The record gives the reactivity of an RNA of 177 nucleotides to DMS and 2A3. The RNA was probed in 150 mM KOAc, 10 mM MgCl2 and 150 mM bicine (pH 8.5) at 24 C. The data come from the RNA Mapping Database (RMDB), library OK2TRN.

RNA sequence: GGGAACGACUCGAGUAGAGUCGAAAAGGACCAUGCCACGAUCAGCGAGGUGGUGCUGGUCCCGGGGCCUACCGCACUGCUGGCGCCGGAUUGGGUGCCGUGGGAGCAACGGGUGCGGCCGGGAGACAUCCAAAGGUACCUUCGGGUACCUUUGGAUAAAAGAAACAACAACAACAAC
Reactivity to DMS in 0.01 (KOAc 150mM, MgCl2 10mM, bicine 150mM(pH8.5), 24C), signal-to-noise 2, nucleotides 027 to 126: g000g000a030c010c000a010u000g000c010c010a030c020g010a160u030c190a120g000c120g000a190g000g010u000g000g020u000g040c240u000g000g010u000c000c010c030g010g000g010g000c050c010u000a150c020c030g000c020a040c010u000g020c050u000g010g010c020g010c000c010g020g030a150u000u000g010g010g020u010g000c020c010g020u010g020g000g020a100g010c070a080a110c090g000g000g000u000g010c030g010g010c030c060g020g010g000a140g000a120c130
Reactivity to 2A3 in 0.01 (KOAc 150mM, MgCl2 10mM, bicine 150mM(pH8.5), 24C), signal-to-noise 1, nucleotides 027 to 126: g000g000a000c010c000a000u030g050c020c000a050c040g070a300u130c070a110g300c060g240a120g130g020u000g010g030u020g000c070u040g000g000u000c000c000c000g030g050g060g000c000c000u030a050c030c000g040c000a000c090u100g000c030u040g030g000c020g040c020c020g040g080a150u250u300g160g000g000u050g050c020c030g020u150g000g060g030a110g000c040a090a130c150g010g000g040u090g000c020g030g000c030c010g000g000g000a050g000a040c040

Overview
For 2A3 the reverse transcriptase was SuperScript II with manganese. The DMS profile rests on 1,987 reads.